About this RNA
Source: RMDB library M2RFPK, as collected in RNAgym. Structure probing data (2A3 and DMS) for a 207-nucleotide construct.

[RMDB]
RNA sequence: GGGAACGACUCGAGUAGAGUCGAAAAUGACGUUAAACUGCUGACUAAUACAUACUGACACCGGUUGCUCAACAGGCUGUGUGGGACAAUAGAAUAACAAGGCUGUCAAUUUGAGCUUGACGGCUGCAAAACCUGCAGUACUUCGGUACUGCAGGAACAUGUCUAGCUUCUUCGGAAGCUAGACAUGAAAAGAAACAACAACAACAAC
Reactivity to 2A3 in 0.01 (KOAc 150mM, MgCl2 10mM, bicine 150mM(pH8.5), 24C), signal-to-noise 4, nucleotides 027 to 156: u080g020a020c040g030u060u070a070a050a040c030u070g030c010u020g030a050c020u070a030a110u080a100c060a020u130a060c030u080g080a030c010a020c050c020g070g000u040u050g020c020u010c050a030a050c020a100g020g030c030u030g030u030g000u040g090g020g040a010c020a070a010u110a140g120a070a040u110a120a060c080a080a080g030g000c000u000g000u000c000a010a010u060u060u210g040a020g070c000u000u000g000a000c000g020g000c010u020g000c020a030a070a020a100c000c000u000g000c020a000g000u000a000c010u040u060c100g060g000u000a000c000u000g000c010a000g000g000a000a000
Reactivity to DMS in 0.01 (KOAc 150mM, MgCl2 10mM, bicine 150mM(pH8.5), 24C), signal-to-noise 1, nucleotides 027 to 156: u000g000a120c040g000u000u000a090a040a180c060u000g030c010u010g020a090c030u000a040a100u000a140c030a090u000a180c060u010g000a080c040a090c020c010g000g010u010u010g000c020u020c040a110a120c090a070g000g030c060u010g010u010g000u000g030g020g000a110c060a070a100u000a060g020a110a090u000a060a120c070a020a190g020g030c080u030g000u000c010a020a030u010u000u010g000a140g040c260u010u000g000a030c000g050g080c020u000g020c030a030a080a080a100c010c000u000g000c000a020g010u010a010c000u000u020c300g060g010u010a000c000u010g050c010a010g010g020a010a030

Values cover nucleotides 27 to 156. The RNA was probed in 150 mM KOAc, 10 mM MgCl2 and 150 mM bicine (pH 8.5) at 24 C.